[RMDB]
RNA sequence: GGGAACGACUCGAGUAGAGUCGAAAACGCUGGGACAUCGGGCCACGUUAGACAUGCUCUCGUACUGAAGCGCGCACGGUACACGCGAGAGCAACAGCUAACGUGGUCUCUAGCGUGUGUCCUGUGCUGAAGCGCGCACGGCAACCGAAAGGUGCGACAUAUGUCCAUGCUUCGGCAUGGACAUAUGAAAAGAAACAACAACAACAAC
Reactivity to DMS in 0.01 (KOAc 150mM, MgCl2 10mM, bicine 150mM(pH8.5), 24C), signal-to-noise 2, nucleotides 027 to 156: c030g010c020u010g010g010g010a050c050a070u010c090g020g000g030c000c010a080c010g030u010u000a030g010a060c110a250u000g000c000u000c050u010c000g060u000a070c030u000g020a120a060g030c040g040c030g010c000a280c030g010g010u000a140c070a150c220g000c090g010a040g010a000g070c010a030a060c090a140g000c010u000a020a080c040g040u000g000g010u000c000u010c040u010a040g010c090g000u010g000u000g000u000c000c010u000g040u010g000c010u000g010a070a070g010c010g010c000g020c010a300c060g020g000c010a080a130c020c010g010a070a160a150g010g030u000g040c020g000a190
Reactivity to 2A3 in 0.01 (KOAc 150mM, MgCl2 10mM, bicine 150mM(pH8.5), 24C), signal-to-noise 4, nucleotides 027 to 156: c030g000c010u040g010g000g030a070c020a230u140c170g030g000g000c000c010a000c000g000u010u000a010g030a100c070a130u080g010c000u000c000u010c000g000u040a020c040u060g050a230a070g010c010g000c000g020c010a020c020g010g060u150a050c120a030c230g100c090g020a000g000a000g070c000a020a020c070a030g080c010u010a000a000c000g000u000g000g000u000c000u000c000u010a010g020c040g020u110g000u010g020u030c000c000u050g020u080g020c040u070g030a120a060g000c000g000c010g000c020a000c010g050g000c020a060a090c030c000g070a050a060a030g040g000u070g030c030g030a020